RNA sequence: GGGAACGACUCGAGUAGAGUCGAAAAGAUAUGGAGCCUAGUAGGGAGUGGGUCGGAAACGACCCAACUUUGAUCUACGGGCUCCUAAGUCAAAACGAGAUAGGCCUGUUCGCAGGCCUAUCUCGAAUCAUAAGUCCUACUUCGGUAGGACUUAUGAAAAAGAAACAACAACAACAAC
Reactivity to DMS in 0.01 (KOAc 150mM, MgCl2 10mM, bicine 150mM(pH8.5), 24C), signal-to-noise 2, nucleotides 027 to 126: g000a020u000a300u010g000g010a010g030c000c000u000a080g030u000a010g020g000g010a020g040u000g000g020g010u000c000g030g010a070a050a130c000g020a010c000c020c000a000a000c000u000u000u020g020a120u010c000u000a010c000g020g000g020c000u000c000c000u000a010a070g000u000c050a080a050a090a270c000g030a000g000a010u000a000g000g020c000c000u000g010u000u010c240g020c000a030g020g010c000c000u000a000u000c000u000c000g010a030a070